[RMDB]
Structure probing data (2A3 and DMS) for a 177-nucleotide construct. The data come from the RNA Mapping Database (RMDB), library OK2TST. For DMS the reverse transcriptase was MarathonRT. For 2A3, 857 sequencing reads were counted. In probing experiments dimethyl sulfate is read out at A N1 and C N3, which are open when not base-paired. For 2A3 the reverse transcriptase was SuperScript II with manganese.
RNA sequence: GGGAACGACUCGAGUAGAGUCGAAAAAUCAUAACGUCGCUCGUCACGAUAGCAUCUACUUUUCAUUUCCGAUUGCGACGAUCGCAUUGGUCUUGCUACUAAUCAUUGAUUUCAUUGUAGAAGCUAAUGACUCAGUGGGGUUCGCCCCACUGAGUCAAAAAGAAACAACAACAACAAC
Reactivity to 2A3 in 0.01 (KOAc 150mM, MgCl2 10mM, bicine 150mM(pH8.5), 24C), signal-to-noise 1, nucleotides 027 to 126: a000u090c070a020u090a230a010c020g040u010c020g000c060u010c040g140u060c040a000c060g060a120u090a000g000c010a010u040c010u040a020c030u000u140u020u060c070a060u000u040u000c020c010g110a090u040u180g030c020g010a020c040g070a070u170c060g000c040a040u000u090g000g010u040c030u080u170g040c070u040a060c010u000a010a050u060c070a130u040u140g000a020u020u070u210c100a050u120u040g000u020a000g010a020a010g000c000u040a150a050
Reactivity to DMS in 0.01 (KOAc 150mM, MgCl2 10mM, bicine 150mM(pH8.5), 24C), signal-to-noise 1, nucleotides 027 to 126: a030u000c080a030u010a100a180c080g000u000c010g010c050u020c200g010u010c000a110c220g010a070u030a030g010c010a080u000c010u020a030c030u010u010u010u010c160a100u000u010u000c010c000g000a090u000u000g000c010g010a040c070g030a020u000c060g020c020a070u000u000g000g000u030c020u030u010g010c160u020a060c030u010a050a030u010c020a100u000u000g000a100u010u000u000c110a080u000u010g000u000a030g000a000a050g000c050u000a040a100
Reactivities are rounded to 0.1 and cut off at 0 and 3.